The data come from the RNA Mapping Database (RMDB), library TTRDEL. Chemical mapping of a 177-nucleotide RNA with DMS and 2A3.

RNA sequence: GGGAACGACUCGAGUAGAGUCGAAAAGAUAUGGAAAUAGGAACCGUCUAUAGGCGUUGAAAUCGGAAACGAUGGAGCCUAAACGACGAAACUAUUUCCUAAGUCAAAAGAUCUCUUCGGAGAUCAAGUCAAUAGUCUACUUCGGUAGACUAUUGACAAAAGAAACAACAACAACAAC
Reactivity to DMS in 0.01 (KOAc 150mM, MgCl2 10mM, bicine 150mM(pH8.5), 24C), signal-to-noise 2, nucleotides 027 to 126: g000a010u020a300u010g010g000a000a010a010u010a000g000g000a140a200c300c020g000u000c000u020a300u000a010g000g010c020g010u020u010g000a060a110a010u000c000g020g000a120a130a140c030g010a010u000g040g000a100g010c000c000u010a000a020a130c300g010a010c000g000a040a050a300c010u000a020u000u010u010c000c000u000a000a060g000u000c010a150a030a100a100g000a010u000c000u000c000u000u040c130g060g000a010g000a010u000c000a040a070
Reactivity to 2A3 in 0.01 (KOAc 150mM, MgCl2 10mM, bicine 150mM(pH8.5), 24C), signal-to-noise 1, nucleotides 027 to 126: g040a010u040a020u130g000g020a030a030a020u000a030g080g020a070a140c080c010g000u010c010u030a050u030a010g040g000c040g300u300u040g030a050a040a010u020c020g010g040a060a080a010c010g000a030u040g010g000a020g010c000c010u010a020a010a020c100g010a000c000g000a030a000a000c010u000a010u000u020u000c000c000u000a080a010g040u030c030a040a070a030a110g010a000u000c000u010c000u050u120c300g070g010a000g010a020u000c020a040a000
Conditions: 150 mM KOAc, 10 mM MgCl2 and 150 mM bicine (pH 8.5), 24 C. Reactivities are given for positions 27 through 126. For DMS, 1,180 sequencing reads were counted. For 2A3, 2,548 sequencing reads were counted.